Description
Structure probing data (2A3 and DMS) for a 177-nucleotide construct. DMS adducts were read by reverse transcription with MarathonRT. For DMS, 3,310 sequencing reads were counted. The reactions ran in a buffer of 150 mM KOAc, 10 mM MgCl2 and 150 mM bicine (pH 8.5), at 24 C.
RNA sequence: GGGAACGACUCGAGUAGAGUCGAAAACUAGAACUUUCGAGUUCUAGCUGUGCGAUGAUGAGUGAAUCCAAUGCUGACGGGAUGAUGAACCCCGAACCUGAGCUUAUGCCACGGCUUCGGCCGUGGCGCAGACUAGAUGAUUCGUCAUCUAGUCUGCAAAAGAAACAACAACAACAAC
Reactivity to 2A3 in 0.01 (KOAc 150mM, MgCl2 10mM, bicine 150mM(pH8.5), 24C), signal-to-noise 3, nucleotides 027 to 126: c000u010a000g020a010a010c000u030u090u170c290g090a030g000u010u010c000u000a010g000c050u070g070u100g110c050g050a060u070g010a040u080g030a030g070u060g060a160a040u010c020c030a050a100u120g000c010u010g030a030c020g010g020g020a020u070g030a040u100g060a100a080c010c010c010c000g010a030a020c030c040u030g080a040g100c050u170u110a080u300g000c010c000a000c000g010g000c000u040u040c160g050g000c030c000g020u000g000g000c030
Reactivity to DMS in 0.01 (KOAc 150mM, MgCl2 10mM, bicine 150mM(pH8.5), 24C), signal-to-noise 3, nucleotides 027 to 126: c010u000a000g010a020a000c000u000u000u020c110g010a020g000u000u010c000u000a010g000c050u000g020u000g010c050g000a070u000g000a110u010g000a070g020u010g010a110a060u000c020c040a060a080u000g020c040u000g010a200c070g000g010g010a040u000g010a110u010g000a110a090c040c000c010c010g010a070a090c130c060u000g010a100g010c080u000u020a040u010g020c010c000a010c000g010g010c000u000u000c220g050g010c000c000g040u000g000g020c010